[RMDB]
RNA sequence: GGGAACGACUCGAGUAGAGUCGAAAAGUAUGGAUGCCACCGUGACGGCUCAAUCAGACAAGUGCCAACGAUAACGAGGCGCUCGCUAUUGCUGCGUAACUGACGGCCUGACGGUCUGACGUUACAAAAAACGAAAAGUGGUUCGCCACUUUUCGAACAUUUUUUUUGGGUUCGCCCAAAAAAAAUGAAAAGAAACAACAACAACAAC
Reactivity to DMS in 0.01 (KOAc 150mM, MgCl2 10mM, bicine 150mM(pH8.5), 24C), signal-to-noise 2, nucleotides 027 to 156: g020u010a080u000g000g010a120u010g000c030c000a110c050c090g000u000g030a100c060g010g000c010u010c050a050a080u010c050a070g000a140c080a070a100g050u010g000c010c020a050a110c010g000a110u000a050a070c060g020a210g040g030c130g030c040u010c010g040c040u000a030u010u010g010c010u000g020c070g010u020a030a080c020u000g000a300c300g010g000c030c010u000g030a110c150g030g030u010c010u000g010a300c240g020u000u000a070c020a000a020a040a050a070a140c030g010a010a000a010a030g020u000g000g030u020u000c300g020c000c000a030c010u000u000u010u000c000g000a050a080
Reactivity to 2A3 in 0.01 (KOAc 150mM, MgCl2 10mM, bicine 150mM(pH8.5), 24C), signal-to-noise 1, nucleotides 027 to 156: g080u040a110u150g020g030a060u050g030c000c040a010c020c030g100u080g040a090c030g000g000c000u020c110a000a090u090c040a030g070a180c090a150a020g010u000g020c030c000a120a070c060g090a110u090a190a060c110g010a130g020g010c010g010c040u000c000g030c030u080a050u250u250g060c110u090g020c030g030u060a070a050c020u010g020a030c000g030g000c000c000u190g070a090c110g010g010u020c020u040g000a020c010g010u000u030a060c040a000a030a030a000a000a030c000g000a010a000a000a000g000u000g000g000u040u120c140g060c010c010a000c020u000u000u000u060c000g000a000a010